[RMDB]
This 177-nucleotide RNA was probed chemically with DMS and 2A3.
DMS adducts were read by reverse transcription with MarathonRT.
Conditions: 150 mM KOAc, 10 mM MgCl2 and 150 mM bicine (pH 8.5), 24 C.
RNA sequence: GGGAACGACUCGAGUAGAGUCGAAAACAUCUCAGUACCCGCAGGAAGAGAAAACAACCGUGAUUCCGGGAGUAGUGGCGAGCGAAACCGGAUGAGGCCAAACCUACGACGUGUGAGACCCGGCAGGGGUAAAAUCAUCGUUCGCGAUGAUUUUACCAAAAGAAACAACAACAACAAC
Reactivity to DMS in 0.01 (KOAc 150mM, MgCl2 10mM, bicine 150mM(pH8.5), 24C), signal-to-noise 3, nucleotides 027 to 126: c090a100u000c040u010c020a150g000u000a110c020c010c010g000c100a110g030g020a120a060g000a160g000a070a080a120a120c100a100a100c040c050g000u000g000a190u000u000c020c010g000g000g010a060g000u000a120g010u000g010g050c230g010a220g000c000g000a100a200a120c010c000g010g010a000u000g000a100g000g010c030c040a020a160a120c060c010u000a060c020g000a060c130g000u000g000u010g000a100g000a090c030c010c040g040g000c170a110g000g010
Reactivity to 2A3 in 0.01 (KOAc 150mM, MgCl2 10mM, bicine 150mM(pH8.5), 24C), signal-to-noise 2, nucleotides 027 to 126: c030a100u030c020u000c020a010g040u050a080c000c000c020g010c010a030g030g050a100a110g090a030g010a170a080a030a040c030a040a020c030c020g120u090g070a070u080u020c000c000g010g000g030a010g000u000a000g000u030g070g170c170g060a040g010c000g020a040a000a010c000c000g050g000a000u000g010a000g000g000c010c030a080a130a050c020c010u050a050c030g040a020c030g050u060g010u020g080a080g030a040c050c010c000g040g090c070a040g060g150